[RMDB]
RNA sequence: GGGAACGACUCGAGUAGAGUCGAAAAUUGAGUGUGACUGCGGCGGCCGGCGACGGUAGCGGCAUGAUGGAGUGAUGGUCUCACCGGCGACCACGGCGACGAUGAGUGCGUGGCAGGUGCGUCGGCCCUGCCGACUACCAUUCGUGGUAGUCGGCAGAAAAGAAACAACAACAACAAC
Reactivity to DMS in 0.01 (KOAc 150mM, MgCl2 10mM, bicine 150mM(pH8.5), 24C), signal-to-noise 3, nucleotides 027 to 126: u010u010g010a070g030u000g010u000g020a120c120u000g000c050g010g020c060g010g020c010c030g010g000c140g000a090c100g010g010u000a070g010c040g000g020c020a030u010g010a100u000g000g010a130g010u010g010a090u010g020g000u000c040u000c070a100c040c050g020g010c090g000a050c030c010a030c070g010g020c050g010a070c040g000a110u010g000a170g020u000g020c040g010u000g010g010c020a080g010g010u010g000c030g020u000c060g010g010c040c040
Reactivity to 2A3 in 0.01 (KOAc 150mM, MgCl2 10mM, bicine 150mM(pH8.5), 24C), signal-to-noise 2, nucleotides 027 to 126: u110u090g030a040g010u080g000u070g040a030c030u050g020c040g040g000c000g050g050c000c000g030g010c050g010a050c030g060g010u050a030g020c060g020g000c030a030u140g050a080u090g120g000a030g040u090g080a090u060g030g020u000c010u030c010a040c030c020g050g000c040g020a050c010c000a040c040g060g010c040g010a030c050g070a100u200g070a040g110u200g070c030g020u040g060g000c020a020g080g000u090g050c020g050u030c020g000g040c010c010

This 177-nucleotide RNA was probed chemically with DMS and 2A3. For 2A3, 2,604 sequencing reads were counted. 2A3 adducts were read by reverse transcription with SuperScript II with manganese. It was measured as part of the RMDB library OK2TST. Conditions: 150 mM KOAc, 10 mM MgCl2 and 150 mM bicine (pH 8.5), 24 C.